[RMDB]
RNA sequence: GGGAACGACUCGAGUAGAGUCGAAAAGACCGCUGAAUGCGGAAGUACUAGAUCAACUAGAAAGUAGAUAAAUACAAAAGCUACGUCUCGAAACUAGUUGAUCUAGUCCACUCGAGACGUAGGAAGAGACUAGUCGGAUAUUCGUAUCCGACUAGUCAAAAGAAACAACAACAACAAC
Reactivity to 2A3 in 0.01 (KOAc 150mM, MgCl2 10mM, bicine 150mM(pH8.5), 24C), signal-to-noise 5, nucleotides 027 to 126: g030a010c000c000g010c020u120g280a260a090u300g030c000g030g020a000a020g030u050a070c010u000a000g020a010u000c020a000a010c000u030a000g030a130a220a010g130u130a010g140a210u170a120a290a040u210a060c150a050a180a000a020g070c010u010a010c010g020u000c010u000c060g110a110a090a040c010u010a030g000u000u000g000a000u000c000u010a000g000u000c000c000a080c000u000c000g010a020g000a010c000g020u010a010g000g070a070a050g110a000
Reactivity to DMS in 0.01 (KOAc 150mM, MgCl2 10mM, bicine 150mM(pH8.5), 24C), signal-to-noise 2, nucleotides 027 to 126: g030a080c000c000g000c050u020g090a080a110u010g000c000g000g010a070a050g000u030a080c050u000a030g010a010u000c000a000a030c000u000a020g000a150a130a210g010u000a060g000a120u080a020a140a100u050a090c190a130a040a070a070g020c000u000a000c050g040u000c060u020c030g050a060a060a200c020u020a000g040u000u000g000a020u040c000u000a010g000u010c010c030a070c240u000c020g010a000g010a010c010g020u000a000g000g030a070a110g000a150